[RMDB]
RNA sequence: GGGAACGACUCGAGUAGAGUCGAAAAGAUAUGGAUGUGUGAUGGGACAUGCUUAUUCUCGGAAACGAGAGCAAGCAACAGCCCAUACACAUCCUAAGUCAAAGCCCCGUCCUUCGGGACGGGGCAACCAUUGAAUCAUGUUCGCAUGAUUCAAUGGAAAAGAAACAACAACAACAAC
Reactivity to 2A3 in 0.01 (KOAc 150mM, MgCl2 10mM, bicine 150mM(pH8.5), 24C), signal-to-noise 5, nucleotides 027 to 126: g010a000u040a020u100g000g000a000u000g030u000g030u120g300a090u020g020g000g030a110c150a300u090g000c000u020u020a020u040u030c000u000c000g000g020a040a020a020c010g010a010g010a000g030c020a010a000g020c000a060a070c080a130g300c000c000c000a000u000a000c000a000c000a000u000c000c000u000a020a000g010u000c020a180a080a060g000c010c000c000c000g000u010c020c000u110u210c300g130g000g000a000c000g000g010g000g010c000a000a000
Reactivity to DMS in 0.01 (KOAc 150mM, MgCl2 10mM, bicine 150mM(pH8.5), 24C), signal-to-noise 4, nucleotides 027 to 126: g000a050u010a300u010g020g010a000u000g010u000g000u000g010a000u000g000g020g010a120c170a190u000g010c000u000u010a030u000u000c000u000c000g010g000a060a080a120c000g000a010g000a020g010c090a010a010g010c000a030a100c290a180g000c000c000c000a010u000a020c000a010c000a000u000c010c010u000a000a070g000u000c020a140a160a140g000c000c010c000c000g020u010c000c000u000u010c300g020g010g020a010c000g000g000g000g000c010a000a010

Source: RMDB library TTRDES, as collected in RNAgym.
An RNA of 177 nucleotides, treated with 2A3 and DMS and read out base by base.
DMS adducts were read by reverse transcription with MarathonRT.
Reactivities are given for positions 27 through 126.
Values are in units of 0.01, from 0 to 300, in steps of 10.
The RNA was probed in 150 mM KOAc, 10 mM MgCl2 and 150 mM bicine (pH 8.5) at 24 C.